The record gives the reactivity of an RNA of 177 nucleotides to 2A3 and DMS. Values cover nucleotides 27 to 126.
[RMDB]
RNA sequence: GGGAACGACUCGAGUAGAGUCGAAAACUGCUCAUUAGGGCUCAGUCUUCCUCUUGUGGUCCUGACCUGCCUGCCCUCCAUGAGCAAGAGAAUCUGGACUGGUUGGGGGUGUCCUGUCCAAGUGGACCCUUGAUAUGAGGUUCGCCUCAUAUCAAGGAAAAGAAACAACAACAACAAC
Reactivity to 2A3 in 0.01 (KOAc 150mM, MgCl2 10mM, bicine 150mM(pH8.5), 24C), signal-to-noise 2, nucleotides 027 to 126: c010u020g000c010u000c010a010u030u100a060g010g010g010c000u030c020a020g030u000c000u060u040c030c010u070c110u120u190g090u070g070g020u080c030c080u040g030a070c000c030u050g100c020c060u050g010c000c000c000u010c050c020a030u030g040a010g000c040a060a000g030a010g030a040a060u030c030u060g000g050a030c020u030g100g000u090u090g050g040g000g000g000u030g030u030c000c000u020g020u000c010c020a110a040g060u120g090g030a010c020
Reactivity to DMS in 0.01 (KOAc 150mM, MgCl2 10mM, bicine 150mM(pH8.5), 24C), signal-to-noise 3, nucleotides 027 to 126: c070u000g020c030u010c010a090u000u010a070g000g010g020c010u020c070a060g000u000c030u000u010c040c000u000c230u020u000g010u000g010g010u010c100c050u010g010a090c130c040u000g030c180c130u010g030c020c010c020u000c110c170a040u010g010a030g010c020a060a100g010a100g020a060a080u010c100u000g010g000a070c050u000g020g000u000u010g020g020g000g010g020u010g000u010c030c020u010g010u010c030c030a090a150g020u000g000g000a080c140
For 2A3, 3,069 sequencing reads were counted. The RNA was probed in 150 mM KOAc, 10 mM MgCl2 and 150 mM bicine (pH 8.5) at 24 C. For 2A3 the reverse transcriptase was SuperScript II with manganese. It was measured as part of the RMDB library RFMREP.